[RMDB]
RNA sequence: GGGAACGACUCGAGUAGAGUCGAAAAAACCACGGAUACUUACCUAAUGAGGAUCUCUUAACCAGAGGACAUUCAAUUCCAACGAUCGGUUAGGGCAGUUCAUCGUGCUUAGGACCAGUGCUGGAUCUCUUUCUUGUUGUUUCGACAACAAGAAAGAAAAAGAAACAACAACAACAAC
Reactivity to 2A3 in 0.01 (KOAc 150mM, MgCl2 10mM, bicine 150mM(pH8.5), 24C), signal-to-noise 3, nucleotides 027 to 126: a000a000c030c010a060c050g030g000a060u060a120c030u050u060a050c020c010u050a090a050u160g010a070g100g060a020u010c050u000c010u110u050a070a030c000c010a040g010a040g130g010a030c020a030u130u100c040a080a180u170u000c010c010a120a050c130g070a140u110c060g030g000u000u030a020g000g060g000c040a020g050u090u080c040a060u100c100g060u040g010c020u100u090a060g020g090a080c030c020a050g040u060g070c030u060g070g040a120u060c050
Reactivity to DMS in 0.01 (KOAc 150mM, MgCl2 10mM, bicine 150mM(pH8.5), 24C), signal-to-noise 4, nucleotides 027 to 126: a080a080c060c010a100c100g010g010a110u000a050c050u010u010a120c040c040u000a070a050u000g000a120g000g020a060u010c020u010c040u000u010a090a100c150c130a090g000a110g000g010a060c220a070u010u010c140a090a170u000u010c020c030a090a140c160g000a100u000c090g010g000u010u000a070g010g000g020c140a020g020u010u010c090a080u000c070g010u000g020c090u000u000a050g020g010a080c040c080a070g010u000g000c030u000g030g000a110u010c080